RNA sequence: GGGAACGACUCGAGUAGAGUCGAAAAACUGCAUCUACGGAUGCAGAACUACGUUCAUCCAAUUUAUUUGGACGCAUGAAAUGAGAAUAGGGAACGGGAUUCUCAUACGCAGGGUACGGCCUGCGAAAAAACUCCUUAUGCUUCGGCAUAAGGAGAAGGUAACACUUGUGUUCGCACAAGUGUUACCAAAAGAAACAACAACAACAAC
Reactivity to DMS in 0.01 (KOAc 150mM, MgCl2 10mM, bicine 150mM(pH8.5), 24C), signal-to-noise 1, nucleotides 027 to 156: a160c020u010g000c000a030u000c000u000a150c260g110g000a040u010g000c000a020g010a040a020c040u000a000c000g000u000u000c000a130u000c090c050a180a160u000u000u000a090u030u010u000g010g030a020c000g000c070a060u000g000a060a070a090u000g000a090g000a020a060u000a080g030g030g010a070a110c080g030g030g010a300u000u010c060u000c020a090u000a160c000g010c000a030g010g000g000u000a200c090g010g000c000c010u020g010c000g020a000a000a030a080a020a020c000u000c000c000u000u010a000u000g000c000u000u000c300g030g010c000a000u000a000a000g020g010a040g000a000a000
Reactivity to 2A3 in 0.01 (KOAc 150mM, MgCl2 10mM, bicine 150mM(pH8.5), 24C), signal-to-noise 3, nucleotides 027 to 156: a040c000u000g000c000a000u000c000u000a040c210g120g000a000u010g000c000a010g010a020a010c040u090a020c010g010u010u000c020a010u000c010c000a040a020u090u200u150a190u060u100u130g010g000a010c000g030c060a040u160g120a110a130a060u020g000a000g010a020a010u010a020g050g020g040a010a010c010g010g020g000a000u000u020c000u000c000a000u030a040c000g000c000a000g020g000g030u220a080c050g130g090c020c000u010g000c000g020a060a000a000a000a000a000c000u000c000c000u000u000a000u010g010c000u020u040c170g100g000c000a000u000a010a000g000g010a000g000a000a000